RNA sequence: GGGAACGACUCGAGUAGAGUCGAAAAAGCGCGCAAUGUGUACAUGGGUAUUCCCCCAUAUCUGUGUACUACAGCCGAGAGGACUGGUGGGGUGUUGUGUGCAGUGCUAGUGUAUUUGGUGCGCGAAGUGUAUAUAUAAAUUCGUUUAUAUAUACACAAAAGAAACAACAACAACAAC
Reactivity to DMS in 0.01 (KOAc 150mM, MgCl2 10mM, bicine 150mM(pH8.5), 24C), signal-to-noise 1, nucleotides 027 to 126: a060g020c010g020c000g040c040a130a080u030g020u000g010u000a010c000a010u000g000g020g000u000a020u020u080c030c010c000c000c080a230u000a000u010c000u010g000u000g000u000a010c000u020a040c080a120g010c030c020g000a090g010a060g000g010a070c010u000g020g020u000g000g000g000g010u020g000u000u000g000u030g000u040g000c110a280g020u000g000c120u000a210g000u040g000u080a260u000u000u000g000g010u000g020c040g000c030g020a040a070
Reactivity to 2A3 in 0.01 (KOAc 150mM, MgCl2 10mM, bicine 150mM(pH8.5), 24C), signal-to-noise 2, nucleotides 027 to 126: a000g020c020g010c000g000c030a030a130u080g020u010g010u010a000c000a010u010g020g000g000u000a010u050u140c000c010c000c010c000a000u000a000u000c000u000g010u000g000u000a000c010u060a010c000a010g040c000c010g020a030g020a020g040g030a050c040u040g000g010u050g020g020g010g030u050g000u000u170g000u000g000u050g000c040a040g000u000g010c020u020a000g020u040g020u140a120u060u090u100g010g000u050g000c010g000c010g030a080a030